[RMDB]
RNA sequence: GGGAACGACUCGAGUAGAGUCGAAAAGAUAUGGAGUCGUACGGGAGAGCGUAAUCGGAAACGAUUACCGGCUCGAGGAUCGUACCGACUCCUAAGUCAAACGGCUCACUGUUCGCAGUGAGCCGAACAUACAGAAUACGUUCGCGUAUUCUGUAUGAAAAGAAACAACAACAACAAC
Reactivity to DMS in 0.01 (KOAc 150mM, MgCl2 10mM, bicine 150mM(pH8.5), 24C), signal-to-noise 9, nucleotides 027 to 126: g000a020u000a020u020g000g000a010g020u000c010g010u000a010c010g010g000g010a020g010a020g030c020g000u000a000a000u000c000g010g000a010a010a020c000g010a020u000u000a010c300c300g030g010c000u000c010g010a070g020g000a030u010c010g000u000a020c230c150g010a010c000u000c000c000u000a000a050g000u000c010a070a130a280c030g010g000c000u000c000a010c010u000g010u000u010c250g020c010a020g000u000g000a010g010c000c000g000a010a030
Reactivity to 2A3 in 0.01 (KOAc 150mM, MgCl2 10mM, bicine 150mM(pH8.5), 24C), signal-to-noise 5, nucleotides 027 to 126: g010a000u010a000u060g000g000a010g000u000c000g010u010a000c010g010g000g010a050g000a000g010c030g010u010a000a000u000c010g000g000a010a000a000c000g000a010u010u010a010c030c070g260g030c000u000c000g010a120g010g020a000u010c010g010u020a020c070c060g000a000c000u010c000c000u000a000a000g000u000c010a030a080a150c020g000g010c000u010c000a000c000u010g070u120u120c300g010c170a000g000u000g000a000g000c010c000g010a000a000